Source: RMDB library TTRDES, as collected in RNAgym. Structure probing data (DMS) for a 177-nucleotide construct.
RNA sequence: GGGAACGACUCGAGUAGAGUCGAAAAAAUAGAUAUGGAGCUACUACCCACCGCUACCAGGUCCGAAGAACGCUUUCGGAAACGAAAGCGGGAGGACCUGAGUAGCGAGGUAGCUCCUAAGUCACAAUCAAGUGGGUUAGUUCGCUAACCCACUUGAAAAAGAAACAACAACAACAAC
Reactivity to DMS in 0.01 (KOAc 150mM, MgCl2 10mM, bicine 150mM(pH8.5), 24C), signal-to-noise 1, nucleotides 027 to 126: a010a110u000a100g010a150u010a300u000g000g010a000g010c000u000a000c000u050a180c000c000c000a300c100c000g040c000u020a000c010c010a050g020g070u000c000c060g080a140a230g050a270a190c090g000c000u000u050u000c000g020g000a040a140a130c000g010a000a000a000g000c040g000g000g000a010g030g060a000c010c010u000g000a050g000u000a030g000c000g000a000g050g000u000a000g010c000u000c000c000u000a030a000g000u000c090a060c250a180a100